[RMDB]
RNA sequence: GGGAACGACUCGAGUAGAGUCGAAAAGAAAUACGCUUCGGCGUAUUUCAAAAUGCCAGCUAUCAGGUAAAGUGUCAUAGCAAAAAGAAAAAGAAAAGAAAAAAACGCAUCCCUUCGGGGAUGCGAAUCCAUAGCUAUACUUCGGUAUAGCUAUGGAAAAAGAAACAACAACAACAAC
Reactivity to DMS in 0.01 (KOAc 150mM, MgCl2 10mM, bicine 150mM(pH8.5), 24C), signal-to-noise 1, nucleotides 027 to 126: g000a010a010a010u000a000c010g010c000u000u030c290g010g000c010g000u000a000u000u010u010c010a040a000a080a080u000g020c000c030a060g020c060u000a020u010c080a060g000g010u000a030a070a040g010u000g000u010c110a020u010a010g010c030a080a020a020a050a140g040a030a040a030a030a090g000a030a010a030a040g010a010a000a040a060a050a060a210c010g010c000a000u000c000c000c000u000u000c250g060g000g010g010a000u000g010c000g020a010a010